[RMDB]
RNA sequence: GGGAACGACUCGAGUAGAGUCGAAAAGUUUACGCUCCAAGAUCGGUGGAUAGCAGCCCUAUCAAUAUCUAGGAGAACUGUGCUAUGUUUAGAAGAUUAGGUAGUAUCUAAACAGAACAAUUUACCUCAUACGUUAGGACGUUCGCGUCCUAACGAAUCCAUGCAGAUGGUUCGCCAUCUGCAUGGAAAAAGAAACAACAACAACAAC
Reactivity to 2A3 in 0.01 (KOAc 150mM, MgCl2 10mM, bicine 150mM(pH8.5), 24C), signal-to-noise 4, nucleotides 027 to 156: g020u030u040u080a040c070g010c020u000c000c000a010a000g010a060u090c130g100g240u170g090g070a030u010a020g050c060a040g010c060c030c000u050a040u090c030a050a070u040a010u140c030u070a070g000g000a010g030a050a030c040u130g020u040g050c020u020a010u100g000u000u010u000a010g000a070a020g020a100u140u080a050g070g030u040a010g010u020a020u000c000u020a010a010a000c020a030g070a030a010c060a050a030u080u100u080a060c000c010u070c090a080u090a160c020g000u000u000a010g000g000a000c010g000u030u050c210g020c000g100u000c000c000u000a010a000c000g000a000a000
Reactivity to DMS in 0.01 (KOAc 150mM, MgCl2 10mM, bicine 150mM(pH8.5), 24C), signal-to-noise 2, nucleotides 027 to 156: g020u000u000u000a120c170g030c020u000c010c000a110a080g000a040u010c240g050g040u000g030g000a070u010a040g000c060a250g070c130c120c010u020a120u010c030a160a130u000a110u020c060u000a130g010g000a300g000a100a070c020u010g010u000g060c040u000a180u000g000u000u000u000a010g000a040a100g020a200u000u000a130g020g030u010a100g000u010a150u000c010u000a000a030a000c070a010g000a020a020c060a030a080u010u020u000a070c000c000u000c190a080u020a070c020g040u010u000a000g000g000a020c000g040u040u000c290g000c040g010u020c000c000u000a000a010c000g050a040a000
This 207-nucleotide RNA was probed chemically with 2A3 and DMS. The RNA was probed in 150 mM KOAc, 10 mM MgCl2 and 150 mM bicine (pH 8.5) at 24 C.